[RMDB]
RNA sequence: GGGAACGACUCGAGUAGAGUCGAAAAGUCCUCAGGUUCGCCUGAGGACAAAUAAACUUGAGAAAAGAAGGACCGUACUCAAGAAAAUACGGAAACAAACAUAAAGCCGACAGUUCGCUGUCGGCAAGACGGAAUUAUACUUCGGUAUAAUUCCGUCAAAAGAAACAACAACAACAAC
Reactivity to DMS in 0.01 (KOAc 150mM, MgCl2 10mM, bicine 150mM(pH8.5), 24C), signal-to-noise 1, nucleotides 027 to 126: g000u000c000c000u000c000a020g000g000u000u000c300g070c000c000u000g010a010g000g020a000c000a020a100a080u010a040a090a200c010u000u010g000a090g020a260a040a110a070g000a080a150g000g010a110c010c000g000u000a090c020u000c080a020a110g000a110a080a070a040u000a050c090g000g000a070a090a130c070a090a040a080c220a130u000a040a120a060g000c000c060g040a060c000a020g000u000u000c190g030c020u000g000u000c010g000g000c000a000a000
Reactivity to 2A3 in 0.01 (KOAc 150mM, MgCl2 10mM, bicine 150mM(pH8.5), 24C), signal-to-noise 1, nucleotides 027 to 126: g000u000c000c010u010c020a000g020g030u030u080c200g040c030c010u010g000a080g000g000a000c010a000a000a010u000a000a000a030c000u030u000g000a050g050a090a220a020a030g090a070a090g110g040a020c000c050g000u020a030c020u030c070a120a040g030a110a120a020a030u090a010c010g060g070a070a090a020c060a050a110a010c040a160u130a140a120a000g030c000c010g010a010c000a000g000u000u170c150g050c090u000g000u000c000g000g000c010a000a000